[RMDB]
RNA sequence: GGGAACGACUCGAGUAGAGUCGAAAAACAUUAUGUAGGCAGCUUCGAGGAUCCAUACCAUUCACACUGCAUGAAAGUCACAGCUCAAAACAGUGAUGUAAGUUCUAAGACAAUUGUUUGACUUUCCAAAUAACAUUUUUCUCAGGGCAUGAAUACAACCUACCGGAUAUUUCGAUAUCCGGUAGGUAAAAGAAACAACAACAACAAC
Reactivity to DMS in 0.01 (KOAc 150mM, MgCl2 10mM, bicine 150mM(pH8.5), 24C), signal-to-noise 2, nucleotides 027 to 156: a100c040a110u000u000a040u000g010u000a090g040g040c050a090g030c040u000u010c030g020a110g030g020a090u000c060c050a090u000a100c010c010a160u000u000c040a080c050a070c030u010g010c040a130u000g010a060a010a080g030u000c050a030c110a130g000c050u000c020a040a100a220a040c000a100g000u000g000a050u010g010u000a060a120g000u000u000c030u000a070a090g000a130c100a030a080u010u000g020u000u010u000g010a100c060u000u000u000c040c110a080a030a070u000a060a070c010a080u000u000u000u000u000c030u000c060a100g010g000g040c010a090u000g000a070a090u000a130c060a060
Reactivity to 2A3 in 0.01 (KOAc 150mM, MgCl2 10mM, bicine 150mM(pH8.5), 24C), signal-to-noise 3, nucleotides 027 to 156: a010c010a080u140u150a080u140g010u030a050g060g000c010a030g010c060u090u100c050g040a010g000g030a000u010c030c000a010u050a080c040c000a020u010u040c010a020c030a030c070u010g000c040a040u110g050a040a040a010g020u040c010a020c020a130g040c040u050c110a080a100a050a070c030a040g030u010g080a080u040g040u100a030a060g030u050u060c050u120a040a010g060a040c020a060a070u090u040g020u080u050u060g030a060c000u060u040u000c040c020a000a120a050u090a060a010c030a040u090u070u000u050u080c030u020c060a040g000g010g030c000a020u080g110a090a060u150a090c030a030